[RMDB]
RNA sequence: GGGAACGACUCGAGUAGAGUCGAAAAGCACAACUGGAGAUACCAGUGAACACGUGAUUGAACUCUCAGCCUCAAGGACAGGUCAGAAAAGGAGCCUCAGGUCAACAAUGUGUUCUCGACCUGCUUGGUACUGAGCAAGUUUCGACUUGCUCAGUACAAAAGAAACAACAACAACAAC
Reactivity to DMS in 0.01 (KOAc 150mM, MgCl2 10mM, bicine 150mM(pH8.5), 24C), signal-to-noise 4, nucleotides 027 to 126: g020c050a040c070a140a090c030u000g000g010a240g020a170u010a150c030c000a020g000u000g010a100a080c120a060c120g020u000g000a110u000u000g000a110a110c120u000c020u000c040a100g010c060c040u000c050a060a080g000g000a110c070a020g010g000u000c060a080g000a100a040a050a090g000g020a110g010c110c030u000c120a020g020g010u000c030a080a070c110a090a090u000g030u000g000u000u000c070u000c100g010a040c060c030u020g010c100u000u010g010
Reactivity to 2A3 in 0.01 (KOAc 150mM, MgCl2 10mM, bicine 150mM(pH8.5), 24C), signal-to-noise 2, nucleotides 027 to 126: g030c000a000c030a070a090c020u030g010g010a130g030a160u210a220c000c010a000g030u020g040a030a030c070a010c100g040u030g060a110u080u100g060a100a030c010u000c010u000c070a010g040c000c000u070c040a030a050g050g000a020c020a020g000g080u050c010a010g080a030a170a010a020g060g010a020g010c000c030u050c080a030g000g040u040c020a060a030c010a070a220u120g050u030g020u090u000c060u010c030g020a030c000c010u010g000c030u020u050g020